An RNA of 177 nucleotides, treated with DMS and read out base by base.
RNA sequence: GGGAACGACUCGAGUAGAGUCGAAAAGGCAAGCUUGCCCGCAUCAUUCAGGAGCAGGGGCGUCGCGACCAACUGGGUGUGAAGUUCGGCAGCGGAGACAGUCCGAACUGCCGGGGUAUGACAGAAAUCUAUGGGAGCACUUCGGUGCUCCCAUAGAAAAAGAAACAACAACAACAAC
Reactivity to DMS in 0.01 (KOAc 150mM, MgCl2 10mM, bicine 150mM(pH8.5), 24C), signal-to-noise 2, nucleotides 027 to 126: g060g040c020a030a300g020c080u010u020g000c000c000c030g010c090a090u020c080a120u010u010c030a040g000g000a200g010c000a050g020g040g000g030c110g000u000c010g050c020g000a160c000c020a030a130c030u030g010g000g000u000g000u000g000a010a030g000u030u000c000g000g020c020a030g040c030g000g020a200g110a200c250a210g060u030c000c000g050a030a040c030u010g000c000c030g000g000g040g010u020a020u000g110a130c050a040g000a150a060a130
Record summary
The DMS profile rests on 1,630 reads.